[RMDB]
RNA sequence: GGGAACGACUCGAGUAGAGUCGAAAACAUUUCCACAGACUCUGUGUCGCACUCUCACCGAGGCCUAAUCUGCAGGUGGAUGGUAUCGGGAUGGCAUGGGGAUCUCGAUGGGGAUGGAUUUGUGGAGCACCCCGGGACGGUUCGCCGUCCCGGGGUGAAAAGAAACAACAACAACAAC
Reactivity to 2A3 in 0.01 (KOAc 150mM, MgCl2 10mM, bicine 150mM(pH8.5), 24C), signal-to-noise 1, nucleotides 027 to 126: c000a000u000u070u050c000c000a010c010a000g000a000c060u000c000u000g000u000g000u010c000g010c040a030c070u100c020u010c070a070c040c000g000a000g020g000c000c000u290a300a300u280c020u190g060c090a270g000g120u100g090g030a010u070g060g080u030a060u040c050g040g000g000a020u110g020g000c040a040u070g000g000g070g030a100u030c000u000c000g200a230u000g000g000g000g000a020u060g000g000a000u000u040u070g110u040g030g040a000g010